[RMDB]
RNA sequence: GGGAACGACUCGAGUAGAGUCGAAAAUAGUUGAUGUAAAUCGAGCAUAAAUCGAGGGACAGAGGCCCUGGGGAGCUGGUGCUGGGCAGCCGCUCAUCUCCUGUUUGCUUGCCAUGUGCAUGAAGGAUGCUGGCCCAGGACAGGUGCUUGCAGAUGCUAGUGUGGUACAGUUCGCUGUACCACACUAAAAAGAAACAACAACAACAAC
Reactivity to 2A3 in 0.01 (KOAc 150mM, MgCl2 10mM, bicine 150mM(pH8.5), 24C), signal-to-noise 1, nucleotides 027 to 156: u120a040g000u010u010g040a090u150g030u150a000a060a030u040c010g000a000g010c120a030u170a200a220a130u120c070g000a070g000g000g000a030c050a050g090a090g000g090c040c060c030u040g010g000g000g040a010g060c070u070g050g070u020g070c010u020g000g030g040c010a040g020c000c110g100c010u020c020a170u080c070u040c020c010u080g040u170u110u110g020c100u060u120g040c040c050a260u170g070u170g080c020a000u080g040a020a070g040g000a100u110g000c000u000g020g060c000c000c040a010g070g000a000c020a000g140g000u040g070c010u000u150g050c010a030g010a180u030g010c010
Source: RMDB library OK3TST, as collected in RNAgym. Structure probing data (2A3) for a 207-nucleotide construct. For 2A3 the reverse transcriptase was SuperScript II with manganese. The reactions ran in a buffer of 150 mM KOAc, 10 mM MgCl2 and 150 mM bicine (pH 8.5), at 24 C.